[RMDB]
RNA sequence: GGGAACGACUCGAGUAGAGUCGAAAAUACUUGAGGCUUUGUGGGCUAUAUGGGCUGUGUCACAACUACUCAACUCUGCUAUGUAGCACAAAACAACCACAGACAAUACAUAAACAAGUGGGCAUGGCUGUGCACCAAUAAAACUUUAUUUACACAAAAAAUACUGGCUAUUCGUAGCCAGUAUUUUAAAAGAAACAACAACAACAAC
Reactivity to 2A3 in 0.01 (KOAc 150mM, MgCl2 10mM, bicine 150mM(pH8.5), 24C), signal-to-noise 1, nucleotides 027 to 156: u040a000c030u040u080g010a020g050g030c040u140u030u010g050u020g030g020g050c030u040a040u010a050u220g040g030g030c030u010g020u000g060u100c050a080c070a070a020c060u120a040c020u020c010a010a090c020u030c020u060g000c000u010a020u130g020u050a020g030c050a000c020a040a040a030a000c000a070a040c010c040a010c010a010g100a040c090a100a080u180a070c020a050u150a050a130a000c020a140a090g020u010g000g020g030c030a020u060g050g000c010u030g030u030g060c010a040c020c020a070a080u130a090a140a030a000c020u000u000u280a070u070u220u200a000c000a000c060a020a170
Reactivity to DMS in 0.01 (KOAc 150mM, MgCl2 10mM, bicine 150mM(pH8.5), 24C), signal-to-noise 1, nucleotides 027 to 156: u000a040c050u000u000g000a070g020g040c070u000u000u000g000u000g030g000g000c000u010a050u000a110u010g040g020g020c020u000g000u000g020u000c110a070c020a080a120c020u010a060c030u010c010a060a080c030u010c110u000g000c050u000a040u010g020u020a060g000c040a120c050a110a090a050a090c090a080a060c080c020a030c040a090g000a060c080a060a120u010a060c120a120u010a100a130a060c030a050a130g020u000g000g010g000c070a090u000g080g000c040u010g000u000g100c030a090c090c040a050a100u000a060a100a100a070c080u000u010u000a040u010u000u010a100c010a070c060a000a050
The record gives the reactivity of an RNA of 207 nucleotides to 2A3 and DMS. Source: RMDB library OK3TST, as collected in RNAgym. For DMS, 2,296 sequencing reads were counted. For DMS the reverse transcriptase was MarathonRT. 2A3 adducts were read by reverse transcription with SuperScript II with manganese. Values cover nucleotides 27 to 156.